RNA sequence: GGGAACGACUCGAGUAGAGUCGAAAAGAUAGCUAUCAUCUGAGAUGUACCAUCAUGUCAAAUAGCAUUCGUGCCAUACUAUGAUAUGAUCAGAUGCAUCACGUGAUGAGUCACGGCACUGUAACAAGCCAGUUACCAGGUUCGCUUGGUGACUGGCAAAAGAAACAACAACAACAAC
Reactivity to 2A3 in 0.01 (KOAc 150mM, MgCl2 10mM, bicine 150mM(pH8.5), 24C), signal-to-noise 6, nucleotides 027 to 126: g110a040u220a010g010c020u020a010u040c000a000u010c000u020g040a020g000a150u010g010u030a110c120c000a010u000c000a000u000g000u000c000a000a010a010u020a000g000c010a010u050u090c100g020u030g000c000c010a060u050a070c030u030a020u030g020a010u000a000u000g010a000u020c050a050g040a050u080g000c000a000u000c010a000c040g090u040g000a000u000g000a000g010u040c020a010c030g000g000c010a000c030u040g020u040a070a030c030a030a030
Reactivity to DMS in 0.01 (KOAc 150mM, MgCl2 10mM, bicine 150mM(pH8.5), 24C), signal-to-noise 9, nucleotides 027 to 126: g010a120u030a070g010c020u000a080u000c000a010u000c010u000g000a090g010a020u000g010u000a040c100c190a090u000c000a010u010g000u000c010a020a060a070u010a090g000c010a080u020u040c170g020u000g010c020c050a070u020a060c120u010a220u000g000a010u000a010u000g000a010u000c200a080g010a070u020g010c000a000u000c000a130c020g010u030g010a010u000g000a020g000u010c180a080c150g010g010c000a050c040u010g010u020a070a100c130a070a120